[RMDB]
RNA sequence: GGGAACGACUCGAGUAGAGUCGAAAACAUUACGAAUUCAGUCGCAAAUUGUAGAAUUAGCUACUCUACGAUUUAGUGAGGGUUAGUAACGUUGUAAUAUAAUAUAGUCUUUGGAAGGAUUAUAUUGGAGCCGCGGACAAGUUCGCUUGUCCGCGAAUCAGUCAUAAGCGUUCGCGCUUAUGACUGAAAAAGAAACAACAACAACAAC
Reactivity to 2A3 in 0.01 (KOAc 150mM, MgCl2 10mM, bicine 150mM(pH8.5), 24C), signal-to-noise 1, nucleotides 027 to 156: c010a030u060u080a030c020g020a020a040u050u040c020a110g230u010c020g000c010a000a000a000u000u000g000u000a000g010a000a000u040u000a050g030c040u070a040c020u000c000u020a000c010g000a000u020u010u060a050g010u020g010a010g020g020g000u050u030a060g000u010a080a040c090g010u010u020g040u040a090a080u080a140u030a080a040u000a030u000a000g000u000c010u040u060u110g190g050a130a090g040g020a000u000u040a030u040a030u010u020g040g080a040g110c110c020g000c000g000g000a000c000a000a000g000u060u120c190g020c190u000u000g000u000c010c010g000c000g000a000a010